[RMDB]
RNA sequence: GGGAACGACUCGAGUAGAGUCGAAAAGAUAUGGACAUAGAGAGCUUUUGACGGACAGUCGGAAACGACUGCCCGAUAAGCUCCUAUGUCCUAAGUCAAAAGAAAUGCGGCUUCGGCCGCAUUUCAACAUCCAUUGUCUGUUCGCAGACAAUGGAUGAAAAGAAACAACAACAACAAC
Reactivity to 2A3 in 0.01 (KOAc 150mM, MgCl2 10mM, bicine 150mM(pH8.5), 24C), signal-to-noise 1, nucleotides 027 to 126: g000a000u010a020u060g000g010a000c010a000u040a000g230a000g000a010g230c040u140u250u300u300g100a010c000g000g000a010c000a000g000u000c010g010g000a010a030a010c010g010a000c000u000g020c000c000c000g010a020u080a120a010g000c000u000c000c020u020a000u000g000u010c000c000u000a000a000g000u000c010a040a040a070a000g020a020a000a000u010g000c020g000g000c070u150u260c300g160g000c000c000g060c010a000u000u010u000c000a000a000
Reactivity to DMS in 0.01 (KOAc 150mM, MgCl2 10mM, bicine 150mM(pH8.5), 24C), signal-to-noise 1, nucleotides 027 to 126: g010a020u000a130u020g000g000a030c000a000u000a000g000a180g020a010g010c000u000u000u000u000g010a300c080g010g010a000c000a010g010u000c000g040g000a020a030a050c000g010a010c000u000g010c000c000c000g000a030u010a010a050g020c000u000c000c000u000a010u000g000u000c000c000u000a010a040g010u010c000a110a110a120a140g000a010a000a000u000g000c030g030g010c010u000u010c250g040g000c000c000g010c010a000u000u000u010c010a080a190